Source information: The record gives the reactivity of an RNA of 207 nucleotides to DMS and 2A3. The data come from the RNA Mapping Database (RMDB), library OK3TST. 2A3 adducts were read by reverse transcription with SuperScript II with manganese. The DMS profile rests on 2,882 reads.
[RMDB]
RNA sequence: GGGAACGACUCGAGUAGAGUCGAAAAGCAUUGAGUAUAAGUAAUCCCUCUAGGUUCAUCUCUGGCCUAACCCUCAUUCUUGGGCUCAUCUAAUAUACUAGACCUUCUCUCCAAGACCCAUGGACAUGAUUGCUUGUAUAAUUGAAUACUAUCCUCAUAUCAUAGUCACGUUCGCGUGACUAUGAUAAAAAGAAACAACAACAACAAC
Reactivity to DMS in 0.01 (KOAc 150mM, MgCl2 10mM, bicine 150mM(pH8.5), 24C), signal-to-noise 2, nucleotides 027 to 156: g040c080a110u000u000g000a190g030u020a050u010a040a090g000u000a110a120u030c010c030c050u000c050u010a070g010g020u000u000c030a120u010c000u000c040u000g020g000c000c010u020a060a060c060c020c010u000c080a130u000u010c020u000u000g020g040g020c040u010c050a070u000c030u050a040a120u000a160u000a120c090u000a110g010a070c050c040u000u010c050u010c020u020c050c030a040a160g000a150c020c030c060a070u000g010g010a040c090a080u000g000a080u000u000g000c010u010u000g000u000a050u000a090a120u000u010g010a140a090u000a060c090u000a150u000c010c000u020c060a300
Reactivity to 2A3 in 0.01 (KOAc 150mM, MgCl2 10mM, bicine 150mM(pH8.5), 24C), signal-to-noise 3, nucleotides 027 to 156: g040c030a060u100u150g030a030g040u100a050u070a190a030g040u090a110a060u050c040c030c000u020c050u050a030g000g040u100u190c050a110u070c090u010c050u060g020g000c010c000u010a060a050c050c010c010u040c050a090u150u020c060u070u040g030g000g020c040u030c010a100u020c030u070a120a070u080a060u030a150c040u030a040g100a190c010c000u110u010c020u010c000u000c020c000a030a060g030a110c000c030c040a030u080g000g020a010c010a060u100g010a040u040u090g000c030u030u030g060u060a060u030a140a120u110u070g040a040a020u120a100c040u060a100u080c010c040u130c070a040